[RMDB]
RNA sequence: GGGAACGACUCGAGUAGAGUCGAAAACGACGCCAAAGAGAUCCUGAUGAAGCGCAAAAUCACUGCCGCACCGGUGGUGGAUGAAAACGGCAAACUCACCGGCGCAAUAAACCUGCAGGAUUUCUAAAAUUAGUAGCGGAUUCGUCCGCUACUAAUUAAAAGAAACAACAACAACAAC
Reactivity to DMS in 0.01 (KOAc 150mM, MgCl2 10mM, bicine 150mM(pH8.5), 24C), signal-to-noise 2, nucleotides 027 to 126: c120g010a100c250g010c090c130a130a120a070g000a030g000a010u000c010c010u010g010a150u010g010a140a160g000c020g010c010a040a050a200a050u010c010a020c010u010g020c000c030g030c270a060c290c130g030g070u000g000g010u000g000g000a080u000g000a030a060a040a090c020g000g010c090a070a110a120c140u000c090a100c020c000g000g030c030g000c000a050a070u000a050a060a160c080c090u010g000c000a020g000g000a020u000u000u010c000u000a040a090
Reactivity to 2A3 in 0.01 (KOAc 150mM, MgCl2 10mM, bicine 150mM(pH8.5), 24C), signal-to-noise 1, nucleotides 027 to 126: c000g050a000c060g030c080c030a210a110a000g010a000g010a010u000c000c010u020g000a060u090g040a180a060g030c010g000c000a000a050a000a150u020c000a010c020u010g000c010c000g140c140a160c150c130g080g000u000g000g000u000g000g000a010u000g040a030a080a000a090c020g020g000c060a140a030a160c060u040c030a080c010c010g000g010c000g020c020a000a000u060a060a110a050c020c030u120g020c040a000g080g000a010u020u010u040c000u000a030a160
Structure probing data (DMS and 2A3) for a 177-nucleotide construct. 2A3 adducts were read by reverse transcription with SuperScript II with manganese. It was measured as part of the RMDB library OK2TST. For DMS, 1,070 sequencing reads were counted. Conditions: 150 mM KOAc, 10 mM MgCl2 and 150 mM bicine (pH 8.5), 24 C.